[RMDB]
Chemical mapping of a 177-nucleotide RNA with 2A3 and DMS. For DMS, 3,716 sequencing reads were counted. DMS adducts were read by reverse transcription with MarathonRT. The reactions ran in a buffer of 150 mM KOAc, 10 mM MgCl2 and 150 mM bicine (pH 8.5), at 24 C.
RNA sequence: GGGAACGACUCGAGUAGAGUCGAAAAGUCGGCCAACGCGAUGACGUUGGGUGUGGCCAUCAACCCAUAUCUGCUGCGAGGCAUCGAGGCGCUGCCCAAUGACAGCACGCUUCUGCUUUGUAUUAAAGCACCAGGAUACGUUCGCGUGUCCUGGUGCAAAAGAAACAACAACAACAAC
Reactivity to 2A3 in 0.01 (KOAc 150mM, MgCl2 10mM, bicine 150mM(pH8.5), 24C), signal-to-noise 7, nucleotides 027 to 126: g040u040c040g040g080c000c010a030a040c010g050c060g200a230u300g070a120c040g020u010u040g020g030g010u060g030u040g010g010c050c000a060u080c050a050a150c010c000c000a030u090a070u100c120u150g060c020u030g020c020g030a040g010g000c010a040u140c130g000a000g020g000c020g000c080u050g000c000c010c090a050a140u240g060a040c030a020g010c010a020c070g020c000u010u000c000u010g020c010u050u040u050g070u050a150u070u200a080a060a040
Reactivity to DMS in 0.01 (KOAc 150mM, MgCl2 10mM, bicine 150mM(pH8.5), 24C), signal-to-noise 3, nucleotides 027 to 126: g010u020c040g000g040c000c050a070a040c000g000c000g060a130u040g010a120c090g000u000u000g030g000g030u030g010u010g010g000c020c050a080u060c170a060a080c030c000c010a130u070a040u020c090u030g010c170u020g030c070g040a070g000g020c020a010u050c070g010a090g010g020c010g010c160u000g000c000c040c160a050a120u050g000a130c150a100g000c020a040c040g000c020u010u000c000u000g000c020u020u000u000g010u000a010u010u020a070a140a100